An RNA of 207 nucleotides, treated with 2A3 and DMS and read out base by base. 2A3 adducts were read by reverse transcription with SuperScript II with manganese. For DMS the reverse transcriptase was MarathonRT.

[RMDB]
RNA sequence: GGGAACGACUCGAGUAGAGUCGAAAACGCAGAGGGUUCUGAUAACAAAGAACCUAGAUAGCCGCAUCGGAAUUAUAGGAUGUAGUCGGUGAGCCGGAAUGCCUGCAUCGUAAGCCUAUAAGUAAAUUUAAGUGUAAUCACUUCGGUGAUUACACAAUCUUAUAGUGGACUUCGGUCCACUAUAAGAAAAAGAAACAACAACAACAAC
Reactivity to 2A3 in 0.01 (KOAc 150mM, MgCl2 10mM, bicine 150mM(pH8.5), 24C), signal-to-noise 2, nucleotides 027 to 156: c080g020c040a070g070a110g120g010g000u000u010c010u050g110a140u080a180a050c030a010a100a000g000a010a010c010c010u020a020g000a070u080a030g050c070c070g020c090a130u170c090g040g060a110a030u040u060a050u040a100g000g040a000u020g050u120a020g070u100c030g000g000u010g050a000g020c030c040g040g090a130a030u070g070c050c010u030g070c000a010u030c010g040u020a070a010g010c000c000u030a030u020a050a030g080u140a050a160a210u100u150u150a180a010g000u000g000u000a000a000u000c000a000c000u000u050c120g050g010u000g000a000u000u000a000c000a000c000a000a010
Reactivity to DMS in 0.01 (KOAc 150mM, MgCl2 10mM, bicine 150mM(pH8.5), 24C), signal-to-noise 2, nucleotides 027 to 156: c130g000c020a120g010a300g000g000g030u010u000c000u030g020a180u000a130a220c300a070a260a020g000a040a020c010c000u000a080g000a190u000a160g010c110c020g020c020a040u000c060g010g000a100a070u000u010a060u000a070g010g000a090u010g080u000a060g020u000c020g010g000u010g020a030g000c010c030g030g000a090a170u000g020c030c000u000g020c010a040u000c030g010u000a120a120g000c000c010u000a050u000a000a030g000u000a070a060a130u020u000u010a070a110g010u010g030u000a040a000u000c010a020c010u000u000c210g040g040u000g000a000u000u000a010c000a000c000a040a030